[RMDB]
RNA sequence: GGGAACGACUCGAGUAGAGUCGAAAAAAGGCACGCGGGGUGACCAUCAUUUAUAUUUCACAUCGGCUGGAGGAAUUGAUGGUUAUUGCUGAUGUGAUCACCGUCAUUAAAGAUGGCGAGACCGUCAGGGUGAGCCUCCUUUCGAGGAGGCUCACCCAAAAGAAACAACAACAACAAC
Reactivity to DMS in 0.01 (KOAc 150mM, MgCl2 10mM, bicine 150mM(pH8.5), 24C), signal-to-noise 1, nucleotides 027 to 126: a200a090g010g010c080a100c010g000c080g060g010g010g000u000g010a060c040c040a030u000c030a070u000u010u010a080u010a120u020u000u000c040a010c020a200u000c040g010g000c070u010g020g010a140g000g000a120a070u020u010g020a020u000g000g010u000u000a020u000u000g010c010u020g000a020u010g020u000g010a050u000c040a090c030c010g030u020c010a070u020u000a100a130a050g040a030u000g000g020c020g020a130g000a170c080c030g000u000c120a060
Reactivity to 2A3 in 0.01 (KOAc 150mM, MgCl2 10mM, bicine 150mM(pH8.5), 24C), signal-to-noise 1, nucleotides 027 to 126: a000a070g100g000c070a040c040g020c040g070g040g010g000u020g000a010c020c010a010u020c000a030u040u160u030a150u050a110u110u100u000c050a030c030a070u020c070g080g000c160u100g140g030a060g100g000a110a070u070u070g000a020u020g140g000u080u000a100u030u130g030c020u000g000a080u030g030u030g030a010u080c030a010c030c030g000u070c000a000u000u160a180a040a100g170a060u010g000g080c070g000a150g070a070c040c070g110u170c040a040

Structure probing data (DMS and 2A3) for a 177-nucleotide construct.
The RNA was probed in 150 mM KOAc, 10 mM MgCl2 and 150 mM bicine (pH 8.5) at 24 C.
For DMS the reverse transcriptase was MarathonRT.
Values cover nucleotides 27 to 126.
The data come from the RNA Mapping Database (RMDB), library OK2TST.